Structure probing data (2A3 and DMS) for a 177-nucleotide construct.
2A3 adducts were read by reverse transcription with SuperScript II with manganese.
The reactions ran in a buffer of 150 mM KOAc, 10 mM MgCl2 and 150 mM bicine (pH 8.5), at 24 C.
[RMDB]
RNA sequence: GGGAACGACUCGAGUAGAGUCGAAAAGACGCGAACCGAUGCCAGUGCUCACUUACACCAUCAGUGUAGCCGCUGAGACAAUGUGUGCCGCUAGUACUCCUGAUGGCGAGACACACUCCGGUGACGCGAUUAUAUUUAUUUUCGAAUAAAUAUAAUCAAAAGAAACAACAACAACAAC
Reactivity to 2A3 in 0.01 (KOAc 150mM, MgCl2 10mM, bicine 150mM(pH8.5), 24C), signal-to-noise 9, nucleotides 027 to 126: g110a010c060g000c010g010a010a010c000c000g030a030u090g040c020c020a020g010u020g040c010u010c010a020c020u050u100a050c060a080c080c030a080u110c040a020g030u020g090u220a020g030c070c060g010c040u050g040a080g040a140c060a110a130u120g010u010g010u020g040c010c000g000c010u010a020g060u080a110c040u060c050c030u070g070a070u080g010g000c000g010a070g100a040c000a000c000a000c020u030c030c010g010g010u040g040a080c010g000c010
Reactivity to DMS in 0.01 (KOAc 150mM, MgCl2 10mM, bicine 150mM(pH8.5), 24C), signal-to-noise 9, nucleotides 027 to 126: g020a160c050g010c010g000a300a020c000c000g000a180u020g000c070c030a040g000u010g010c010u000c010a030c030u010u010a100c150a100c130c130a070u020c120a040g010u010g010u020a030g020c080c070g020c020u000g000a080g010a120c110a120a070u020g010u000g010u010g000c010c010g000c010u000a030g010u020a080c050u010c040c020u010g010a070u010g000g000c010g010a070g000a150c010a010c010a030c020u010c180c010g000g010u010g000a100c030g010c020
Source information:
DMS adducts were read by reverse transcription with MarathonRT.